[RMDB]
RNA sequence: GGGAACGACUCGAGUAGAGUCGAAAAGAUAUGGAUCUGUUGAGGCAACAGCCUGUGGUUCGGAAACGAACCCAGGACAUGCCUUGCAGAUCCUAAGUCAAAACGGCAAGUCUUCGGACUUGCCGAACCAAAAACAGAGGUUCGCCUCUGUUUUUGGAAAAGAAACAACAACAACAAC
Reactivity to DMS in 0.01 (KOAc 150mM, MgCl2 10mM, bicine 150mM(pH8.5), 24C), signal-to-noise 2, nucleotides 027 to 126: g000a010u000a020u010g000g000a000u000c000u000g010u000u000g020a010g030g010c000a180a050c160a100g000c010c000u000g020u020g010g000u000u000c000g010g020a010a010a030c020g020a010a000c000c000c000a000g040g000a030c020a300u010g050c000c000u000u000g000c020a000g010a000u000c000c000u000a000a060g010u000c000a090a090a140a190c020g010g020c010a050a010g000u000c000u000u010c230g030g000a020c000u000u000g010c020c000g010a000a030
Reactivity to 2A3 in 0.01 (KOAc 150mM, MgCl2 10mM, bicine 150mM(pH8.5), 24C), signal-to-noise 2, nucleotides 027 to 126: g010a010u020a030u080g000g000a000u030c000u030g080u300u300g160a040g070g000c170a300a030c090a300g020c020c000u050g090u260g010g020u000u000c000g010g000a020a000a000c010g000a010a000c010c010c000a000g020g000a010c020a120u300g000c000c000u000u000g000c000a000g000a000u010c000c000u010a000a000g000u020c000a030a030a090a150c020g000g000c000a000a000g000u000c000u050u300c300g150g000a000c010u000u000g010c020c000g000a000a020